[RMDB]
RNA sequence: GGGAACGACUCGAGUAGAGUCGAAAACGCGGCCACGCGAUCUGUCCAGCCUGCGCGACACGUUCGCCGCCCUGCCCGCGCUGCGCGAGCGCGUUGCCGAGAUCGCAUCGAACGCGGCCGCGCUCGAGGAGUAUUUACUCUUCGGAGUAAAUACUCCAAAAGAAACAACAACAACAAC
Reactivity to 2A3 in 0.01 (KOAc 150mM, MgCl2 10mM, bicine 150mM(pH8.5), 24C), signal-to-noise 6, nucleotides 027 to 126: c010g000c010g000g000c000c020a030c090g000c010g000a010u000c010u050g160u100c060c030a070g070c060c060u170g010c080g000c000g080a000c010a000c040g030u030u020c010g000c030c010g010c010c020c030u130g040c030c020c030g030c050g000c030u100g000c050g000c000g040a000g010c010g000c000g010u020u020g000c010c010g020a010g000a020u020c010g000c030a050u140c110g100a130a050c080g000c010g070g000c000c000g000c000g030c000u010c010g030a060
Reactivity to DMS in 0.01 (KOAc 150mM, MgCl2 10mM, bicine 150mM(pH8.5), 24C), signal-to-noise 8, nucleotides 027 to 126: c040g020c010g010g010c010c020a050c040g010c010g010a030u000c020u000g000u010c080c090a120g010c070c080u000g010c140g020c010g000a020c020a030c030g010u000u000c030g010c030c030g000c020c080c030u010g010c060c070c080g000c250g010c060u010g020c130g020c010g010a030g000c000g020c030g010u000u000g010c000c030g000a040g000a020u000c030g020c050a120u010c100g010a080a120c100g020c030g000g010c000c010g010c010g010c020u000c030g010a300

Source: RMDB library OK2TRN, as collected in RNAgym.
Structure probing data (2A3 and DMS) for a 177-nucleotide construct.
Reactivities are given for positions 27 through 126.
DMS adducts were read by reverse transcription with MarathonRT.
The RNA was probed in 150 mM KOAc, 10 mM MgCl2 and 150 mM bicine (pH 8.5) at 24 C.
For 2A3, 22,565 sequencing reads were counted.